About this RNA:
Chemical mapping of a 177-nucleotide RNA with DMS. It was measured as part of the RMDB library OK2TRN. For DMS the reverse transcriptase was MarathonRT. The reactions ran in a buffer of 150 mM KOAc, 10 mM MgCl2 and 150 mM bicine (pH 8.5), at 24 C.
RNA sequence: GGGAACGACUCGAGUAGAGUCGAAAAGUGCGGAUUGAAAUUCAUGGGAGCCUCUCCAUAAUGGAUGAACGCCGCGAUAGUCCGCGCAGUCGCGACGUAAACGCUCUGUUUUCCCGUUCAGGCCUCAGGCCCAUAUAGUCUUCGGACUAUAUGGGCCAAAAGAAACAACAACAACAAC
Reactivity to DMS in 0.01 (KOAc 150mM, MgCl2 10mM, bicine 150mM(pH8.5), 24C), signal-to-noise 2, nucleotides 027 to 126: g010u000g000c010g010g020a180u000u020g020a100a160a020u000u000c070a020u000g000g000g010a050g000c150c060u000c090u000c000c010a090u020a060a060u000g000g010a040u020g020a120a070c040g020c000c010g000c000g010a010u000a120g000u000c030c120g040c060g000c060a260g040u000c000g010c010g020a000c000g010u000a060a100a090c040g000c010u000c030u000g000u000u000u000u010c020c010c000g020u000u020c110a070g010g000c040c110u000c150a130